[RMDB]
RNA sequence: GGGAACGACUCGAGUAGAGUCGAAAACGGAAGCAUUAAAACCAUUCGAGCUAGUCAAUGCGUGGCGUGUCUCUCCGCCGCGUGUUGGCGAAUGUAAAGAGUGACUAAGCAUGUAGUACCGAGGAUGAUAAGAGCAAUUCGUUCGCGAAUUGCUCAACAAUAAGGGCGUGUUCGCACGCCCUUAUUGAAAAGAAACAACAACAACAAC
Reactivity to 2A3 in 0.01 (KOAc 150mM, MgCl2 10mM, bicine 150mM(pH8.5), 24C), signal-to-noise 4, nucleotides 027 to 156: c050g020g040a060a050g010c040a040u040u120a040a040a040a120c030c000a010u040u070c050g020a030g020c040u060a020g030u010c000a000a020u010g010c000g010u020g000g000c020g010u090g100u040c020u000c020u020c120c000g000c000c000g000c010g000u010g000u000u000g010g000c000g000a000a010u040g010u050a090a030a060g040a010g030u040g020a030c050u040a070a020g070c020a040u060g040u120a050g030u050a100c020c050g000a040g060g030a070u150g010a030u140a230a150g000a000g000c000a000a000u000u000c000g030u060u060c160g000c000g140a000a000u000u000g010c000u000c000a000a000
Reactivity to DMS in 0.01 (KOAc 150mM, MgCl2 10mM, bicine 150mM(pH8.5), 24C), signal-to-noise 3, nucleotides 027 to 156: c040g000g020a190a160g030c040a120u000u010a060a070a060a120c040c000a100u000u010c050g000a230g020c040u010a140g010u000c030a000a010u000g010c020g020u010g020g030c020g000u000g030u000c090u010c030u010c260c010g010c000c000g030c020g030u020g030u000u010g010g030c030g020a050a030u000g020u020a040a090a170g010a090g040u000g000a080c030u000a120a170g020c070a050u000g020u000a100g000u010a080c040c040g000a120g020g010a080u000g010a170u000a040a180g000a020g010c010a000a020u010u010c000g020u000u010c300g050c040g020a020a000u000u000g000c000u000c010a010a080
Chemical mapping of a 207-nucleotide RNA with 2A3 and DMS. For DMS the reverse transcriptase was MarathonRT. It was measured as part of the RMDB library M2RFPK.